RNA sequence: GGGAACGACUCGAGUAGAGUCGAAAAUGGCUGUUUGUGUCUCCAUCCAUUGCCAAUCAGCUGUCAUUAACCACGCAAGACUGUAACGGAGUGCUAAAUUACCGUGUGAAUACCAUAACAAAGAUUGCUCACUAGUAUUGUUCGCAAUACUAGUGAGAAAAGAAACAACAACAACAAC
Reactivity to 2A3 in 0.01 (KOAc 150mM, MgCl2 10mM, bicine 150mM(pH8.5), 24C), signal-to-noise 6, nucleotides 027 to 126: u070g000g000c020u020g050u100u040u030g110u030g010u040c020u000c030c030a140u030c030c020a090u110u110g000c000c000a000a030u020c010a010g010c010u020g030u060c000a040u060u120a080a030c010c010a030c050g030c010a030a060g040a080c060u060g020u110a030a010c040g010g040a050g020u050g030c080u100a060a100a100u090u060a090c010c040g030u030g020u030g090a020a050u080a120c030c010a050u040a140a050c050a060a090a010g100a120u080u240g040
Reactivity to DMS in 0.01 (KOAc 150mM, MgCl2 10mM, bicine 150mM(pH8.5), 24C), signal-to-noise 6, nucleotides 027 to 126: u010g010g010c030u000g000u000u010u000g020u010g020u000c040u000c130c040a090u000c060c070a080u000u010g010c040c030a050a070u000c040a060g010c020u000g010u010c060a090u020u010a100a150c070c040a070c110g010c070a070a070g000a080c050u000g010u010a070a060c090g010g000a070g010u010g010c100u000a020a070a070u000u000a090c070c030g010u000g010u000g010a100a060u000a120c060c030a060u010a050a080c140a060a070a120g010a100u000u000g010

Description: The record gives the reactivity of an RNA of 177 nucleotides to 2A3 and DMS. The 2A3 profile rests on 8,391 reads. Reactivities are given for positions 27 through 126. Conditions: 150 mM KOAc, 10 mM MgCl2 and 150 mM bicine (pH 8.5), 24 C. It was measured as part of the RMDB library RFMREP.